[RMDB]
RNA sequence: GGGAACGACUCGAGUAGAGUCGAAAAGUGAUGGUUUGGACCUGGGUGGUAGCAUUGAGUUGGUAAAAAGUGGCUGGACCCUUGGGCUAUUUAAAAGGAGGGCAUUCCUGAUGAAUUGGACAAAAGGUCAUGGUGUGCAGGUCAGGCAGUGGUGAGAGCUAUGACGCAAAUUCGUUUGCGUCAUAGCAAAAGAAACAACAACAACAAC
Reactivity to 2A3 in 0.01 (KOAc 150mM, MgCl2 10mM, bicine 150mM(pH8.5), 24C), signal-to-noise 1, nucleotides 027 to 156: g050u040g000a010u100g020g030u060u040u020g080g020a030c020c060u060g000g010g000u010g010g030u040a030g000c030a050u030u100g010a130g000u080u150g030g050u110a000a030a000a080a030g080u080g060g000c000u030g070g000a040c000c000c000u000u050g010g000g020c040u020a090u010u200u170a090a090a030a010g050g000a000g010g010g000c000a010u070u080c010c020u030g030a020u050g020a030a150u090u060g050g000a030c040a010a080a090a020g010g020u040c030a040u040g000g060u030g010u020g010c010a000g020g020u060c010a030g000g050c000a000g020u050g040g050u060g000a020g000a000